[RMDB]
RNA sequence: GGGAACGACUCGAGUAGAGUCGAAAAGAUAUGGAACCGUAACGAGCGAAGAACUCCAUCACAGACACCAGUUCGGAAACGAACUGGUGUUCACAGUGGAGGGAGCUCGGAGAAGGUUCCUAAGUCACACAUCAUAAUAGUUCGCUAUUAUGAUGUGAAAAGAAACAACAACAACAAC
Reactivity to DMS in 0.01 (KOAc 150mM, MgCl2 10mM, bicine 150mM(pH8.5), 24C), signal-to-noise 7, nucleotides 027 to 126: g010a030u000a060u010g000g000a000a010c000c000g000u010a140a300c010g010a010g020c010g010a100a180g010a160a300c010u000c000c000a010u010c090a260c290a300g000a020c010a000c000c000a010g010u000u000c000g010g010a010a010a050c000g020a010a000c000u000g000g000u000g000u000u000c100a070c300a250g010u000g000g010a020g010g010g000a020g030c000u000c000g000g000a060g010a110a200g000g000u000u000c000c000u000a000a050g000u000c010a300
Reactivity to 2A3 in 0.01 (KOAc 150mM, MgCl2 10mM, bicine 150mM(pH8.5), 24C), signal-to-noise 3, nucleotides 027 to 126: g000a000u010a000u050g010g000a000a000c000c010g020u010a020a030c000g000a010g050c030g250a300a010g000a010a030c010u000c010c010a070u170c060a160c140a260g130a020c000a000c000c000a000g000u000u000c000g020g000a010a000a010c000g000a000a000c000u000g010g010u000g000u020u000c000a010c000a010g030u000g000g000a020g000g000g010a000g000c010u010c010g020g000a000g020a000a000g000g000u000u000c000c000u000a000a000g000u000c000a010
Chemical mapping of a 177-nucleotide RNA with DMS and 2A3.
Values are in units of 0.01, from 0 to 300, in steps of 10.
The data come from the RNA Mapping Database (RMDB), library TTRINS.
For 2A3, 25,182 sequencing reads were counted.
The RNA was probed in 150 mM KOAc, 10 mM MgCl2 and 150 mM bicine (pH 8.5) at 24 C.